[RMDB]
Description: The record gives the reactivity of an RNA of 177 nucleotides to 2A3 and DMS. The data come from the RNA Mapping Database (RMDB), library TTRDEL. As a SHAPE reagent, 2A3 marks flexible, mostly unpaired nucleotides at the ribose 2'-OH. The reactions ran in a buffer of 150 mM KOAc, 10 mM MgCl2 and 150 mM bicine (pH 8.5), at 24 C. For 2A3, 2,424 sequencing reads were counted. Reactivities are given for positions 27 through 126. For 2A3 the reverse transcriptase was SuperScript II with manganese.
RNA sequence: GGGAACGACUCGAGUAGAGUCGAAAAGAUAUGGACGCUAGAGGAGCUUGGAUUUAUGUCUCGGAAACGAGAGCAUUGUCAGCUCCGAUUGGCGUCCUAAGUCAAAACAACGGGUUCGCCCGUUGAACUUUGAACGCAUGUUCGCAUGCGUUCAAAGAAAAGAAACAACAACAACAAC
Reactivity to 2A3 in 0.01 (KOAc 150mM, MgCl2 10mM, bicine 150mM(pH8.5), 24C), signal-to-noise 2, nucleotides 027 to 126: g070a020u060a000u150g010g010a000c000g000c060u080a020g040a100g080g000a000g010c080u170u210g220g020a050u270u300u150a010u100g050u000c000u010c010g040g000a120a090a010c010g000a000g010a030g090c010a000u000u010g020u000c000a000g000c010u040c010c000g010a000u000u030g000g000c000g010u020c000c000u000a010a000g000u000c000a000a010a070a100c000a000a010c000g050g000g040u080u050c260g160c060c000c000g000u020u010g010a020a010
Reactivity to DMS in 0.01 (KOAc 150mM, MgCl2 10mM, bicine 150mM(pH8.5), 24C), signal-to-noise 3, nucleotides 027 to 126: g000a060u010a300u020g000g000a030c010g010c000u000a000g030a300g010g000a020g000c000u010u020g040g020a000u000u010u000a010u010g010u000c000u000c010g020g000a070a070a190c000g000a000g000a040g010c010a010u000u010g000u000c010a030g000c000u000c010c000g010a150u010u000g000g000c000g010u000c000c000u000a010a130g020u010c010a100a030a110a170c010a010a030c000g010g000g010u000u000c270g000c000c000c000g000u000u000g000a090a190